[RMDB]
Structure probing data (2A3) for a 207-nucleotide construct. Reactivities are rounded to 0.1 and cut off at 0 and 3. The RNA was probed in 150 mM KOAc, 10 mM MgCl2 and 150 mM bicine (pH 8.5) at 24 C. The 2A3 profile rests on 731 reads.
RNA sequence: GGGAACGACUCGAGUAGAGUCGAAAAGGGGUCGUUAUCAGCGAUAUUAGCUCGCUUGGAUUUAUACACUGAAGCCUCCACGGUGUAUUGUCAGCGAGAAAAAAUUCGCUAGUAACGACGGAGGCACCCAAAAUCCACUAACUUCGGUUAGUGGAAACGGAUAACGAAGGUUCGCCUUCGUUAUCCGAAAAGAAACAACAACAACAAC
Reactivity to 2A3 in 0.01 (KOAc 150mM, MgCl2 10mM, bicine 150mM(pH8.5), 24C), signal-to-noise 1, nucleotides 027 to 156: g150g000g020g020u010c020g040u000u000a020u100c090a000g000c000g000a010u070a210u300u150a120g050c010u000c010g010c020u020u150g170g010a220u300u300u160a050u020a010c010a000c030u010g010a110a050g030c020c000u030c000c000a010c000g050g000u000g020u000a000u000u070g120u110c060a010g000c070g000a000g000a060a080a000a000a000a040u110u010c000g000c020u000a000g020u000a000a000c000g000a000c060g000g000a030g000g000c000a030c000c000c000a070a040a080a060u000c000c000a000c020u000a000a000c000u000u020c280g080g010u010u060a000g000u020g000g000a020a000a000